[RMDB]
RNA sequence: GGGAACGACUCGAGUAGAGUCGAAAAGAUAUGGACUCUACAGCAAUGAUGCCCACACAUUUUCGGAAACGAACCAUGUGGGUUGAGCUGUUAGAGUCCUAAGUCAAAACUCGGGUUCGCCCGAGAACAUGUAACAGAGCUUCGGCUCUGUUACAUGAAAAGAAACAACAACAACAAC
Reactivity to 2A3 in 0.01 (KOAc 150mM, MgCl2 10mM, bicine 150mM(pH8.5), 24C), signal-to-noise 2, nucleotides 027 to 126: g010a000u020a000u050g010g010a000c010u020c000u000a010c000a010g060c010a080a300u200g050a050u190g120c000c050c000a010c000a000c000a060u180u220u130u130c010g010g000a020a000a000c020g010a020a010c090c000a070u120g000u000g000g040g000u020u030g030a010g000c000u000g010u100u030a010g020a000g000u000c000c000u010a000a000g000u000c000a020a030a030a030c010u020c000g000g010g000u070u100c240g110c060c000c000g000a000g000a010a010
Reactivity to DMS in 0.01 (KOAc 150mM, MgCl2 10mM, bicine 150mM(pH8.5), 24C), signal-to-noise 3, nucleotides 027 to 126: g030a000u010a040u010g000g020a020c000u000c000u000a000c010a000g010c020a170a090u010g010a080u010g010c010c000c000a010c000a070c300a180u000u000u000u010c010g030g010a000a010a020c000g000a030a160c300c180a150u020g030u000g000g000g010u000u000g000a300g010c000u000g000u000u000a000g000a010g000u000c000c000u000a000a050g010u000c000a140a060a080a120c000u000c000g010g000g000u000u010c260g010c010c000c000g000a030g000a030a100